[RMDB]
Chemical mapping of a 207-nucleotide RNA with DMS and 2A3. The RNA was probed in 150 mM KOAc, 10 mM MgCl2 and 150 mM bicine (pH 8.5) at 24 C. 2A3 adducts were read by reverse transcription with SuperScript II with manganese. The data come from the RNA Mapping Database (RMDB), library OK3TST.

RNA sequence: GGGAACGACUCGAGUAGAGUCGAAAACGACCACCUGACGGGUCGGACAUAGCGUCAGGAUCAUCCGUGUCAGUCACCACGGUAAUCAUGUGACUGAUGAUGGUUUUCCAUCUUAAUCUGACUGUGUCGUAGCAGUCUACAGUACUAUGACAUUAGAAUAUAUAGUAUGGUUCGCCAUACUAUAUAUAAAAGAAACAACAACAACAAC
Reactivity to DMS in 0.01 (KOAc 150mM, MgCl2 10mM, bicine 150mM(pH8.5), 24C), signal-to-noise 4, nucleotides 027 to 156: c030g030a060c010c000a100c010c000u000g000a070c020g000g020g010u000c010g030g010a160c130a110u000a090g010c020g000u020c020a030g010g010a190u010c080a080u020c010c110g030u010g030u000c020a060g000u000c010a030c060c050a050c010g010g030u000a060a060u000c190a110u000g010u000g010a080c000u000g000a050u010g010a040u010g010g010u000u000u000u000c020c010a080u010c030u000u000a080a130u010c060u010g010a160c040u000g020u010g000u000c030g030u000a030g000c000a060g010u000c090u000a070c150a130g010u010a010c010u010a020u000g010a040c000a030u010u000a090g010a220
Reactivity to 2A3 in 0.01 (KOAc 150mM, MgCl2 10mM, bicine 150mM(pH8.5), 24C), signal-to-noise 8, nucleotides 027 to 156: c020g010a000c000c000a010c000c000u010g000a000c000g010g000g000u020c020g060g060a050c080a120u160a050g050c000g000u000c000a000g010g000a000u070c020a010u020c000c010g010u000g050u040c010a000g000u000c000a000c000c000a000c000g020g060u070a030a050u070c060a020u050g000u000g000a010c010u000g000a020u080g000a000u000g010g080u070u120u200u130c010c000a000u010c000u020u120a160a140u100c130u120g010a020c000u000g010u010g000u060c010g000u030a000g000c010a010g030u000c030u040a040c040a040g060u040a060c020u010a020u060g010a010c000a040u080u180a070g090a130